RNA sequence: GGGAACGACUCGAGUAGAGUCGAAAAGAUAUGGAAUCUCCCGUUGAAAUCACGGUGUCGGAAACGACAUUGAUGGAGGGGAUUCCUAAGUCAAACAACAAUGAUCUGUUCGCAGAUCAUUGUUGAAUCUAUGGAGCAUGUUCGCAUGCUCCAUAGAAAAAGAAACAACAACAACAAC
Reactivity to 2A3 in 0.01 (KOAc 150mM, MgCl2 10mM, bicine 150mM(pH8.5), 24C), signal-to-noise 3, nucleotides 027 to 126: g010a030u060a040u090g010g030a000a030u000c260u140c000c000c000g080u180u170g110a090a090a060u120c030a030c210g060g000u000g000u000c010g060g000a060a040a060c010g000a010c030a010u000u060g060a120u010g020g040a050g030g000g000g030a000u000u020c020c000u000a070a000g020u000c030a110a070a090c010a000a020c010a000a000u000g000a010u000c000u010g070u110u100c300g000c130a000g020a010u010c000a000u000u010g000u010u000g010a000a010
Reactivity to DMS in 0.01 (KOAc 150mM, MgCl2 10mM, bicine 150mM(pH8.5), 24C), signal-to-noise 4, nucleotides 027 to 126: g010a040u000a300u000g000g000a020a000u000c000u010c000c000c010g000u010u010g010a140a120a030u000c020a060c300g000g000u000g010u000c000g010g000a110a100a270c000g010a020c000a010u000u010g010a060u000g020g000a030g020g000g000g000a040u000u000c000c000u000a000a080g000u000c030a140a110a280c010a000a010c000a000a000u000g000a000u000c000u000g010u010u010c110g010c010a010g010a000u000c000a000u000u000g000u000u000g000a090a110